[RMDB]
RNA sequence: GGGAACGACUCGAGUAGAGUCGAAAAGCGCGAGAGGGACCGGGCUCGCGCCCUACCGGAAAUACAACCAUAUCCACGUGUGCUAGGAUAUGGCCGGUCCCACCGAAACAGCACACGGGACAACCUAUGUAGUUGAUGUGUUCGCACAUCAACUACAAAAAGAAACAACAACAACAAC
Reactivity to 2A3 in 0.01 (KOAc 150mM, MgCl2 10mM, bicine 150mM(pH8.5), 24C), signal-to-noise 2, nucleotides 027 to 126: g000c000g000c000g000a000g000a010g010g000g000a000c000c000g000g040g030c000u000c000g000c000g010c000c000c000u060a070c010c000g060g060a030a150a000u230a070c100a080a060c020c000a010u000a000u010c020c000a040c070g030u000g000u010g010c000u020a040g000g020a020u000a010u040g020g010c000c000g000g000u000c000c010c000a020c000c080g100a130a050a010c050a070g010c000a000c000a000c000g010g070g010a020c040a030a040c040c010u060a040
Reactivity to DMS in 0.01 (KOAc 150mM, MgCl2 10mM, bicine 150mM(pH8.5), 24C), signal-to-noise 1, nucleotides 027 to 126: g000c050g000c000g000a010g010a080g010g000g010a060c020c000g000g000g030c000u000c000g000c010g000c000c050c050u000a100c020c000g000g000a040a040a050u060a090c230a190a240c000c010a000u010a000u010c060c000a030c080g010u000g030u000g000c010u020a270g000g050a070u000a090u000g000g000c020c000g010g000u020c000c000c300a130c100c090g050a110a020a000c300a020g000c000a020c040a060c000g000g040g060a100c120a070a080c160c000u020a070